Chemical mapping of a 177-nucleotide RNA with 2A3 and DMS. For DMS, 22,436 sequencing reads were counted. For DMS the reverse transcriptase was MarathonRT. Reactivities are given for positions 27 through 126. The RNA was probed in 150 mM KOAc, 10 mM MgCl2 and 150 mM bicine (pH 8.5) at 24 C. It was measured as part of the RMDB library OK2TRN.

RNA sequence: GGGAACGACUCGAGUAGAGUCGAAAAUGAAUAGGGCGUUUAGUUGUAUGUCAUAGACCCGAAACUGAAGUGAGCUAGCCAUGAACAGGCUGAAGUGACGUGACCACGUCAUGGAGGGCCGAACCAGCUAUACCACUGGAUUCGUCCAGUGGUAUAGAAAAGAAACAACAACAACAAC
Reactivity to 2A3 in 0.01 (KOAc 150mM, MgCl2 10mM, bicine 150mM(pH8.5), 24C), signal-to-noise 3, nucleotides 027 to 126: u080g030a050a040u050a080g030g030g000c010g030u110u150u100a090g020u030u170g190u140a130u130g150u040c020a020u050a100g050a050c020c000c020g010a040a040a010c070u060g030a040a010g090u030g070a000g030c000u030a020g010c010c010a060u070g040a080a050c050a080g000g020c000u020g020a000a010g020u000g010a010c010g040u040g060a100c090c050a040c080g000u000c010a000u000g000g030a120g080g040g000c020c000g010a020a010c000c000a000g040
Reactivity to DMS in 0.01 (KOAc 150mM, MgCl2 10mM, bicine 150mM(pH8.5), 24C), signal-to-noise 9, nucleotides 027 to 126: u000g010a080a060u000a080g000g010g010c040g020u010u000u010a090g020u000u000g010u000a050u010g010u000c030a050u000a100g010a110c020c020c020g010a080a070a100c110u010g010a090a100g010u000g000a050g010c050u000a060g010c050c030a050u000g010a070a100c170a140g010g000c010u000g000a230a160g010u000g000a010c010g010u000g010a160c290c210a070c030g000u000c010a010u000g000g000a280g000g000g010c010c010g010a060a080c080c050a100g000